[RMDB]
RNA sequence: GGGAACGACUCGAGUAGAGUCGAAAAUUCCGACCGAAGGGGACGAGUGGGGAGAAGGGCGCCCCGAGGGGGGUCAUCUGGCAAAGAGAGGAGGAAUUUCGGAAGGAAUUCUCCCAAGAAGGUCCAAAACGAUACCAGUUCGCUGGUAUCAAAAGAAACAACAACAACAAC
Reactivity to DMS in 0.01 (KOAc 150mM, MgCl2 10mM, bicine 150mM(pH8.5), 24C), signal-to-noise 7, nucleotides 027 to 129: u040u020c040c020g020a150c050c050g000a040a050g050g010g000g020a050c070g000a070g040u070g060g060g000g000a060g020a070a090g030g010g050c250g040c090c040c020c010g000a060g000g010g010g000g030g030u000c070a050u000c060u070g000g020c080a040a050a060g020a070g030a050g000g000a050g010g000a030a050u020u010u010c040g000g020a060a150g020g040a050a050u020u010c070u020c010c000c010a100a100g030a060a050g040g030u040c050c050a040a040a080a090c220
Reactivity to 2A3 in 0.01 (KOAc 150mM, MgCl2 10mM, bicine 150mM(pH8.5), 24C), signal-to-noise 7, nucleotides 027 to 129: u040u010c010c010g020a010c000c000g030a050a010g010g000g000g010a010c030g020a030g040u140g020g010g010g000a040g020a020a020g030g010g010c040g050c000c010c000c010g030a100g010g020g000g000g000g000u000c000a050u020c040u070g010g000c020a050a080a010g070a010g010a040g020g000a020g010g040a030a020u040u040u030c020g020g010a020a010g010g010a000a010u050u000c030u010c030c000c010a010a030g070a010a010g050g020u070c050c040a030a090a020a030c100
Notes:
An RNA of 170 nucleotides, treated with DMS and 2A3 and read out base by base. The RNA was probed in 150 mM KOAc, 10 mM MgCl2 and 150 mM bicine (pH 8.5) at 24 C. 2A3 adducts were read by reverse transcription with SuperScript II with manganese. For DMS, 27,195 sequencing reads were counted. DMS (dimethyl sulfate) methylates the pairing face of unpaired adenines and cytosines.